The data come from the RNA Mapping Database (RMDB), library OK1LIB. The record gives the reactivity of an RNA of 177 nucleotides to 2A3 and DMS. As a SHAPE reagent, 2A3 marks flexible, mostly unpaired nucleotides at the ribose 2'-OH. For DMS the reverse transcriptase was MarathonRT. For 2A3, 19,019 sequencing reads were counted. The DMS profile rests on 44,938 reads. Reactivities are given for positions 27 through 126. The reactions ran in a buffer of 150 mM KOAc, 10 mM MgCl2 and 150 mM bicine (pH 8.5), at 24 C.

[RMDB]
RNA sequence: GGGAACGACUCGAGUAGAGUCGAAAACUCCUUCACGGUUAAGUCUGUCUCUGGCAGAGCAGACUGUCAGGAGGAAGAGGUCACCAUCUUCACGAAGCCAAAGCCAAAUUCCGCCUUGUCCUGUAAAAUGAUGAUUAAUCUUCGGAUUAAUCAUCAUAAAAGAAACAACAACAACAAC
Reactivity to 2A3 in 0.01 (KOAc 150mM, MgCl2 10mM, bicine 150mM(pH8.5), 24C), signal-to-noise 9, nucleotides 027 to 126: c020u020c010c000u050u070c080a090c140g080g020u080u210a070a010g010u000c010u020g120u090c000u000c010u070g230g010c100a030g010a010g000c000a000g000a010c000u000g010u010c030a030g010g040a020g030g020a040a030g060a030g040g030u060c020a050c080c010a060u020c010u080u080c020a030c080g040a050a010g020c020c000a080a050a010g020c010c010a030a100a070u070u010c010c010g000c010c000u020u050g030u020c010c010u060g060u170a040a100a010
Reactivity to DMS in 0.01 (KOAc 150mM, MgCl2 10mM, bicine 150mM(pH8.5), 24C), signal-to-noise 9, nucleotides 027 to 126: c050u000c010c010u000u010c070a090c140g010g010u010u020a050a060g010u000c000u000g000u050c010u000c020u010g030g020c140a130g000a020g000c020a040g000a010c000u000g000u010c090a080g000g010a040g000g000a090a060g010a110g010g010u010c040a070c050c030a080u000c030u000u010c060a090c090g010a120a100g010c030c040a060a130a120g010c020c040a050a110a140u020u000c020c030g000c030c020u010u010g010u000c020c020u000g010u030a060a060a080